[RMDB]
RNA sequence: GGGAACGACUCGAGUAGAGUCGAAAAGCACCGGCUUGACCAAGGGUGCGAACACUUGACGGGUCUAACCAGACGUCUUGUGGAUUAGGACGUUCUAGGACUAGUAGUCUACCUAGUUCGUCCGAAAGGCUAGCAUGUGGUUCGCCACGUGCUAGCCAAAAGAAACAACAACAACAAC
Reactivity to DMS in 0.01 (KOAc 150mM, MgCl2 10mM, bicine 150mM(pH8.5), 24C), signal-to-noise 3, nucleotides 027 to 126: g020c010a040c010c000g000g020c040u020u000g000a140c100c050a190a100g020g010g020u000g020c010g000a040a140c030a030c020u000u000g010a040c000g000g010g030u000c010u000a120a080c300c200a090g000a180c010g010u000c010u000u000g000u000g000g000a150u050u030a080g000g000a000c000g010u010u000c000u000a000g000g010a110c150u020a090g040u040a110g000u010c060u000a160c010c000u000a020g000u000u000c010g000u000c000c010g000a040a060a110
Reactivity to 2A3 in 0.01 (KOAc 150mM, MgCl2 10mM, bicine 150mM(pH8.5), 24C), signal-to-noise 4, nucleotides 027 to 126: g000c000a000c000c000g030g030c040u080u150g100a170c010c010a130a110g170g020g000u020g000c010g020a080a010c010a000c000u030u000g010a010c020g080g000g300u090c040u040a090a060c030c050a050g050a110c020g000u010c000u000u010g010u020g030g050a080u040u200a060g000g000a000c000g000u000u000c000u000a000g000g000a020c040u010a020g130u030a060g020u060c010u020a030c000c000u000a000g000u000u000c000g000u000c010c000g000a010a010a000